An RNA of 177 nucleotides, treated with DMS and 2A3 and read out base by base.
The data come from the RNA Mapping Database (RMDB), library M2PK90.
The DMS profile rests on 10,322 reads.
2A3 adducts were read by reverse transcription with SuperScript II with manganese.
The RNA was probed in 150 mM KOAc, 10 mM MgCl2 and 150 mM bicine (pH 8.5) at 24 C.
Reactivities are given for positions 27 through 126.
RNA sequence: GGGAACGACUCGAGUAGAGUCGAAAAAAUAAGAGUUUGGAUUAACCUAUUGGGAAUUAGCGAUCAAGAAUACAACCUAAGGACCUGGUUGACUUAAUUAUUCCAUAGGUUGGUGGAAGCUAGCGAAAAUUGGUUAGUUAUUCGUAACUAACCAAUUAAAAGAAACAACAACAACAAC
Reactivity to DMS in 0.01 (KOAc 150mM, MgCl2 10mM, bicine 150mM(pH8.5), 24C), signal-to-noise 7, nucleotides 027 to 126: a060a070u010a060a090g000a050g010u000u000u000g010g000a070u000u000a030a030c010c010u000a040u010u010g020g000g000a050a050u000u000a020g010c040g010a040u000c030a030a060g010a130a080u010a090c070a050a070c110c080u010a080a110g020g000a130c210c090u000g000g000u000u000g000a100c040u000u000a020a020u000u000a070u010u000c000c000a050u000a000g000g000u000u000g000g020u000g000g010a040a080g010c030u000a060g020c140g000a060a040
Reactivity to 2A3 in 0.01 (KOAc 150mM, MgCl2 10mM, bicine 150mM(pH8.5), 24C), signal-to-noise 1, nucleotides 027 to 126: a000a030u280a040a020g040a030g010u030u020u080g120g010a010u020u040a010a010c000c000u010a040u110u150g010g010g030a030a050u040u030a010g020c020g030a010u050c010a040a000g040a120a030u160a090c040a060a070c040c020u140a140a130g080g000a050c020c030u030g040g000u010u030g020a050c010u020u010a010a030u010u100a070u130u050c010c000a010u020a000g000g000u000u000g000g010u020g110g050a010a000g010c020u070a040g030c030g100a100a040